[RMDB]
RNA sequence: GGGAACGACUCGAGUAGAGUCGAAAAGCACGUUGGUUCAGAUGAUGGGCCCGCAUCUGUACGAAAGUGAGACGAAAGUCCAGCCAACGUGCAUGAGCACGCGGGCCCCGUGCUCAGCAGCAAAAGAAUAGGCACCUAUAUUCGUAUAGGUGCCUAUAAAAGAAACAACAACAACAAC
Reactivity to DMS in 0.01 (KOAc 150mM, MgCl2 10mM, bicine 150mM(pH8.5), 24C), signal-to-noise 2, nucleotides 027 to 126: g010c000a030c000g000u000u000g000g000u000u010c000a040g010a000u000g000a040u070g020g010g020c010c000c000g000c020a000u000c000u020g000u020a030c030g040a080a100a080g010u010g000a070g010a040c000g060a130a070a150g010u000c000c030a020g010c000c000a000a000c000g010u000g000c020a010u040g000a040g020c000a000c000g010c110g000g000g000c010c000c000c000g000u000g000c010u000c020a220g010c120a150g000c160a030a040a100a080g000a150
Reactivity to 2A3 in 0.01 (KOAc 150mM, MgCl2 10mM, bicine 150mM(pH8.5), 24C), signal-to-noise 3, nucleotides 027 to 126: g000c000a010c000g010u020u000g040g010u100u090c010a020g010a080u070g010a020u040g050g000g020c000c000c000g000c000a000u000c000u030g180u120a040c080g120a100a030a050g080u040g060a170g000a060c020g040a140a030a030g000u010c000c000a010g000c000c000a010a000c000g000u000g000c000a000u000g000a000g000c010a000c010g000c070g000g000g000c000c000c000c000g000u010g000c000u000c000a020g080c020a010g020c030a050a070a060a030g140a090
Chemical mapping of a 177-nucleotide RNA with DMS and 2A3. High 2A3 reactivity points to a flexible backbone, as in loops and unpaired stretches. Reactivities are rounded to 0.1 and cut off at 0 and 3. In probing experiments dimethyl sulfate is read out at A N1 and C N3, which are open when not base-paired. It was measured as part of the RMDB library OK1LIB. The 2A3 profile rests on 2,497 reads.